Structure probing data (2A3) for a 207-nucleotide construct.
[RMDB]
RNA sequence: GGGAACGACUCGAGUAGAGUCGAAAACAAGUUCGUGCUUGCGACUUACACGUAGGGCGAGGGGUGGGCGAAAGUUGCCAUGAGAUCGUAACUUUCGUAGUCAUUGAUAAAGGGGCAGGUCUCGCUCAAAAGACGUUGGUCUUCGGACCAACGUCAAGAGAGCUUAGAUCUUCGGAUCUAAGCUCUCAAAAGAAACAACAACAACAAC
Reactivity to 2A3 in 0.01 (KOAc 150mM, MgCl2 10mM, bicine 150mM(pH8.5), 24C), signal-to-noise 1, nucleotides 027 to 156: c030a010a010g010u100u090c040g000u030g010c030u080u080g020c020g100a090c140u110u150a110c190a050c100g070u050a070g000g000g050c190g040a070g000g020g060g080u170g000g040g010c000g000a000a000a000g000u000u000g000c000c010a110u110g080a020g000a130u030c000g000u040a000a000c000u000u000u000c060g010u010a020g050u020c040a080u020u200g060a080u150a100a060a040g000g000g000g000c030a000g000g040u000c000u010c010g010c010u050c020a110a120a000a050g000a000c000g020u000u000g000g000u020c040u000u050c220g030g020a000c000c000a000a000c010g000u000c000a000a000
Conditions: 150 mM KOAc, 10 mM MgCl2 and 150 mM bicine (pH 8.5), 24 C. For 2A3 the reverse transcriptase was SuperScript II with manganese.